[RMDB]
RNA sequence: GGGAACGACUCGAGUAGAGUCGAAAAUGACGCCAAAGUUCGUGACGUCGGGCGUGUGUUGAUGCCGAGUGAGCUGGUCGGUAACGGGUAUAAGCCUGCGUGCGCAAAGUUCCAUUUAAUGGACAUCAACACAAGCUUUGCCCGGGACCGACAUGUCACGGCAUCACCGGUUCGCCGGUGAUGCCGUAAAAGAAACAACAACAACAAC
Reactivity to 2A3 in 0.01 (KOAc 150mM, MgCl2 10mM, bicine 150mM(pH8.5), 24C), signal-to-noise 1, nucleotides 027 to 156: u180g000a010c000g080c040c070a000a130a210g090u160u230c020g050u080g230a140c020g040u000c000g000g000g000c070g000u050g010u000g010u060u000g030a020u030g030c010c050g040a040g040u140g000a030g050c060u100g090g060u010c010g030g000u000a030a000c010g120g000g000u010a170u070a170a020g000c000c030u180g030c210g040u070g060c140g030c050a090a100a090g040u110u020c000c000a050u090u290u290a240a140u080g010g000a000c000a040u070c030a040a070c000a000c000a030a000g010c000u040u000u060g010c000c010c000g010g000g000a000c000c000g010a000c000a000u000g030u040c050